[RMDB]
RNA sequence: GGGAACGACUCGAGUAGAGUCGAAAACACUGGCCUACGUCACUUCGCGGCCGUUCGUGACCAGCAACAUCAUCGGCGCGACCUCGCUGGAACAGCUGGAAACCAAUCUCGGCAGCGUCGACCUGAAGCAAAAUAUAAAUUUCGAUUUAUAUUUUGCAAAAGAAACAACAACAACAAC
Reactivity to 2A3 in 0.01 (KOAc 150mM, MgCl2 10mM, bicine 150mM(pH8.5), 24C), signal-to-noise 5, nucleotides 027 to 126: c040a010c040u050g050g010c010c050u120a070c070g040u030c030a040c090u050u050c030g010c020g040g000c000c010g010u080u060c050g000u010g030a060c010c000a000g010c020a040a100c010a150u150c010a020u110c030g020g000c000g010c010g050a060c000c040u070c020g010c000u040g020g040a070a040c020a040g000c010u020g020g000a050a020a020c030c000a070a120u040c050u030c080g010g000c010a020g000c010g020u020c010g030a110c000c030u050g020a070a020
Reactivity to DMS in 0.01 (KOAc 150mM, MgCl2 10mM, bicine 150mM(pH8.5), 24C), signal-to-noise 7, nucleotides 027 to 126: c100a160c110u000g000g010c020c040u010a090c100g010u000c070a080c080u000u000c050g020c110g000g010c030c020g010u010u010c180g010u000g020a230c030c020a040g010c030a100a120c220a100u010c110a090u010c010g010g000c020g000c110g000a110c160c080u010c060g000c020u000g020g010a080a070c160a100g010c020u000g010g000a060a150a070c050c070a050a110u010c110u000c040g000g010c050a070g000c030g000u000c060g010a120c070c010u000g010a130a130